Chemical mapping of a 177-nucleotide RNA with 2A3 and DMS. For DMS, 2,116 sequencing reads were counted.
[RMDB]
RNA sequence: GGGAACGACUCGAGUAGAGUCGAAAAGUAGCCUAAUAGACUACGACUUACGCGGUAGGUCGUGAAUAAGCCCGGAGUACAUUCCCAAUGGAACUAGGGAACCCCUCCGGUCGUAUCCAACCUCUGUGAAAGAUACAAUGUUCGCAUUGUAUCUUUCAAAAGAAACAACAACAACAAC
Reactivity to 2A3 in 0.01 (KOAc 150mM, MgCl2 10mM, bicine 150mM(pH8.5), 24C), signal-to-noise 3, nucleotides 027 to 126: g020u040a020g070c010c040u140a220a130u120a130g120a050c020u010a020c070g010a010c010u050u060a060c100g040c100g300g040u040a030g000g010u020c020g010u030g060a060a110u070a070a000g020c000c010c000g000g000a000g020u050a020c030a080u040u000c000c000c000a010a020u170g060g050a110a090c130u050a220g000g000g000a010a020c030c010c000c010u000c010c010g000g000u010c010g000u040a050u020c030c010a060a090c020c020u050c020u060g040u010
Reactivity to DMS in 0.01 (KOAc 150mM, MgCl2 10mM, bicine 150mM(pH8.5), 24C), signal-to-noise 4, nucleotides 027 to 126: g000u010a040g010c010c010u020a150a100u020a190g000a040c030u000a030c010g010a080c050u000u010a060c070g000c130g010g030u030a030g000g000u000c020g030u000g000a090a050u000a080a150g010c260c010c000g000g010a020g020u000a090c200a300u000u010c010c000c000a070a120u000g020g000a040a080c120u010a290g000g010g000a010a040c100c130c300c000u000c010c000g010g030u000c030g030u000a040u000c030c030a090a060c100c030u000c040u000g010u010
Annotation:
Conditions: 150 mM KOAc, 10 mM MgCl2 and 150 mM bicine (pH 8.5), 24 C. Reactivities are given for positions 27 through 126.